[RMDB]
RNA sequence: GGGAACGACUCGAGUAGAGUCGAAAAAGCCAGUCCCUUGAGCGGGGAUGCGUCAUAGACGAGAUACUGCGCGAAGUGGGUCUCCCGCGCGUGGGCUUCCCCGUUGCGGGCGCUGCGGAGGAGGGCGGAGGAAGGAACGUUUCGACGUUCCUUCCUCAAAAGAAACAACAACAACAAC
Reactivity to DMS in 0.01 (KOAc 150mM, MgCl2 10mM, bicine 150mM(pH8.5), 24C), signal-to-noise 2, nucleotides 027 to 126: a130g020c080c030a210g060u000c060c000c030u010u000g000a060g020c100g000g000g000g000a000u010g040c000g000u000c000a120u020a160g000a060c040g000a150g000a130u010a080c000u000g000c010g000c130g000a130a200g050u000g000g000g000u040c100u000c060c000c000g000c050g030c180g000u000g020g000g000c100u000u010c010c060c000c010g020u000u020g030c120g020g000g000c100g030c040u030g030c130g050g030a140g020g000a030g000g000g070c000g030
Reactivity to 2A3 in 0.01 (KOAc 150mM, MgCl2 10mM, bicine 150mM(pH8.5), 24C), signal-to-noise 2, nucleotides 027 to 126: a020g050c000c010a010g040u190c010c000c000u030u170g090a020g000c000g000g000g000g040a020u050g050c040g060u030c050a250u160a160g020a050c030g000a000g020a120u270a260c000u030g020c000g010c050g050a130a050g140u160g020g030g020u030c090u080c030c020c000g050c010g000c010g030u100g000g000g000c000u060u090c000c000c000c000g040u050u140g040c010g010g000g000c040g000c060u090g000c000g040g030a080g010g060a040g010g020g000c070g050